An RNA of 207 nucleotides, treated with DMS and 2A3 and read out base by base.
For 2A3 the reverse transcriptase was SuperScript II with manganese.
For 2A3, 1,113 sequencing reads were counted.
The RNA was probed in 150 mM KOAc, 10 mM MgCl2 and 150 mM bicine (pH 8.5) at 24 C.
[RMDB]
RNA sequence: GGGAACGACUCGAGUAGAGUCGAAAAUUGGCGAAUGCCUGUGGAUCUACAUGUGUUGCGGGUUCGAGACCCGUCAGAGCCCGGCUCUGUAGCUCAAUGGUAGAGCGGUGUAUUCACAUAAACUUGUAAAAGACACGUGCCUUCGGGCACGUGUCAAGAUUCCAACUAACUUCGGUUAGUUGGAAUCAAAAGAAACAACAACAACAAC
Reactivity to DMS in 0.01 (KOAc 150mM, MgCl2 10mM, bicine 150mM(pH8.5), 24C), signal-to-noise 1, nucleotides 027 to 156: u010u000g050g030c000g000a140a070u000g030c050c080u010g020u010g000g020a050u000c110u000a060c000a070u000g000u000g020u000u000g040c000g000g010g030u030u000c080g000a300g000a060c030c010c020g000u000c050a100g000a120g000c000c110c060g060g010c060u000c020u050g010u010a050g030c020u000c000a060a090u000g000g030u020a060g000a040g020c000g000g020u000g000u030a100u000u000c010a080c040a050u000a060a130a070c060u000u000g000u010a090a090a190a160g000a010c000a000c020g020u000g000c000c000u000u010c300g010g030g000c000a020c030g000u010g000u000c000a000a050
Reactivity to 2A3 in 0.01 (KOAc 150mM, MgCl2 10mM, bicine 150mM(pH8.5), 24C), signal-to-noise 2, nucleotides 027 to 156: u050u100g050g000c030g110a250a100u300g000c000c010u020g030u030g010g020a010u010c040u100a000c010a050u060g080u060g000u090u040g020c010g000g000g010u020u000c030g000a010g010a030c000c000c000g030u000c000a000g000a000g020c120c270c220g100g020c000u000c010u010g010u020a000g000c000u000c020a030a100u130g170g120u200a040g000a000g000c000g000g000u010g010u000a020u010u010c020a000c010a040u230a030a080a120c070u090u040g080u070a060a100a000a040g010a000c000a000c010g010u000g020c000c020u000u060c250g030g020g000c010a010c000g000u000g060u010c000a010a010